[RMDB]
RNA sequence: GGGAACGACUCGAGUAGAGUCGAAAAGACGGAAAAAGUCAACGUUGAUAAAGGGUUUCAUUCAACAGCUUAUCAUGUUGUUUGGAGACAAUACCGUCACACGAAGCAUUAGGGAUGCUCUGGUGCCGUACGAGUAUGAAUCAGAUCGGAUGCAACGCGAUUCCCGUAAUUUCGAUUACGGGAAUCGAAAAGAAACAACAACAACAAC
Reactivity to 2A3 in 0.01 (KOAc 150mM, MgCl2 10mM, bicine 150mM(pH8.5), 24C), signal-to-noise 4, nucleotides 027 to 156: g010a000c010g050g040a010a080a080a040a050g020u050c030a050a040c060g050u050u060g060a070u130a120a090a050g100g030g030u040u040u090c060a040u060u040c000a020a020c000a010g070c040u160u100a090u300c070a080u050g040u030u010g050u000u050u040g080g020a060g020a020c020a030a020u060a090c000c010g000u020c010a020c010a010c050g080a060a020g010c020a030u050u110a050g020g010g100a020u070g010c010u000c020u030g030g000u040g010c030c010g000u040a040c030g020a030g020u040a060u180g050a090a020u120c010a040g040a110u050c020g020g020a010u120g010c030a030a070c040g000
Reactivity to DMS in 0.01 (KOAc 150mM, MgCl2 10mM, bicine 150mM(pH8.5), 24C), signal-to-noise 1, nucleotides 027 to 156: g010a090c000g000g010a090a030a060a050a100g020u000c010a120a050c040g030u000u000g000a080u000a100a050a050g020g000g040u000u010u010c050a090u020u000c070a050a020c030a040g010c080u010u000a080u000c080a150u000g150u010u000g020u020u010u000g000g030a170g000a020c060a100a100u000a080c030c020g000u020c050a140c020a060c020g030a120a040g020c030a040u000u010a130g010g080g030a300u000g000c000u000c030u000g020g070u000g040c100c050g050u020a020c120g010a080g010u000a100u010g020a100a060u000c030a080g010a110u010c000g010g000a090u000g030c070a060a110c070g030